[RMDB]
RNA sequence: GGGAACGACUCGAGUAGAGUCGAAAAAGGAUUCCAGAUUCUUCAGGGUCCCAAACUUCAGAUAACUCUAAAAUUGCUACACUAUAUUCUUCUUUAUUUCAUGUGUGCCAAUUUAAAUGUACAAGUCAAUCACUAGUGCUACAAAUGCAGAAGUAAAUACUACCAGGAGGUUCGCCUCCUGGUAGUAAAAAGAAACAACAACAACAAC
Reactivity to 2A3 in 0.01 (KOAc 150mM, MgCl2 10mM, bicine 150mM(pH8.5), 24C), signal-to-noise 1, nucleotides 027 to 156: a050g050g000a140u300u000c020c020a080g020a110u000u030c020u110u070c080a030g010g020g010u020c050c000c000a040a090a040c000u140u110c080a000g000a060u140a020a050c060u060c030u110a060a030a050a050u000u120g000c020u050a020c000a000c000u060a050u080a120u290u060c000u090u000c000u110u160u090a120u180u190u060c050a030u120g020u000g020u060g110c030c000a030a020u130u060u140a140a160a110u210g000u000a030c030a020a020g060u080c020a020a080u060c000a020c140u120a030g050u050g060c020u010a000c060a100a150a110u110g110c050a000g000a020a000g080u160a030a000a300
Background:
Structure probing data (2A3) for a 207-nucleotide construct. The reactions ran in a buffer of 150 mM KOAc, 10 mM MgCl2 and 150 mM bicine (pH 8.5), at 24 C. It was measured as part of the RMDB library OK3TST. For 2A3, 291 sequencing reads were counted. Reactivities are given for positions 27 through 156.